[RMDB]
RNA sequence: GGGAACGACUCGAGUAGAGUCGAAAAGGUGCGAUCUCGGCUCACUGCAACCUCCGCCUCCCGGGUUCAAGCGAUUCUCCUGCCUUAGCCUCCCGAGUAGCUGGGACUACUGGCUCACGCCACCACACAAAACAACCGGAUUCGUCCGGUUGUUUUGAAAAGAAACAACAACAACAAC
Reactivity to DMS in 0.01 (KOAc 150mM, MgCl2 10mM, bicine 150mM(pH8.5), 24C), signal-to-noise 1, nucleotides 027 to 126: g000g040u010g010c090g010a110u000c030u000c020g020g000c000u010c030a060c030u000g040c060a060a050c060c010u000c030c030g040c050c010u000c020c010c030g000g010g000u000u000c050a050a060g040c020g000a130u000u010c030u010c000c030u010g020c020c010u010u010a040g000c010c020u000c020c020c000g000a060g010u000a040g030c010u000g040g000g040a060c030u010a040c080u030g000g020c000u040c090a110c120g030c000c030a060c030c020a050c130a110